Chemical mapping of a 177-nucleotide RNA with 2A3 and DMS. The data come from the RNA Mapping Database (RMDB), libraries RFM100 and RFMREP. Conditions: 150 mM KOAc, 10 mM MgCl2 and 150 mM bicine (pH 8.5), 24 C. 2A3 adducts were read by reverse transcription with SuperScript II with manganese.
[RMDB]
RNA sequence: GGGAACGACUCGAGUAGAGUCGAAAACCAGUGUCCUGAGUCGUAGCAGUGCAGGAGGGGAGCCCUGAAGGAGAGAGCCUGCCUAAAUCGAUGCCUGCAGAUUCAGUUUGCAGAGGCUUAGGAGGAGGUCAGAUUAUAACUUCGGUUAUAAUCUGACAAAAGAAACAACAACAACAAC
Reactivity to 2A3 in 0.01 (KOAc 150mM, MgCl2 10mM, bicine 150mM(pH8.5), 24C), signal-to-noise 9, nucleotides 027 to 126: c010c000a020g090u070g070u090c000c000u020g020a010g020u010c040g050u140a030g020c040a020g030u050g100c010a020g010g050a030g020g030g000g020a050g020c020c010c010u060g100a120a060g110g020a060g010a010g000a010g040c000c010u070g010c040c010u090a090a080a050u120c080g070a040u100g040c000c000u000g000c000a000g000a040u120u150c040a060g050u030u030u020g000c000a010g020a030g100g000c000u020u020a010g020g010a010g020g060a040g010
Reactivity to DMS in 0.01 (KOAc 150mM, MgCl2 10mM, bicine 150mM(pH8.5), 24C), signal-to-noise 5, nucleotides 027 to 126: c010c000a120g010u030g020u000c030c020u000g020a030g010u000c040g000u020a160g010c040a050g020u020g010c050a050g010g010a150g010g000g000g010a130g010c060c020c040u000g020a130a130g020g010a060g030a170g000a110g010c030c020u010g000c020c030u010a030a070a100u020c080g000a110u010g010c060c000u000g000c010a030g010a030u010u020c190a120g010u010u000u000g000c000a040g010a190g010g010c020u020u000a040g000g010a030g000g010a110g010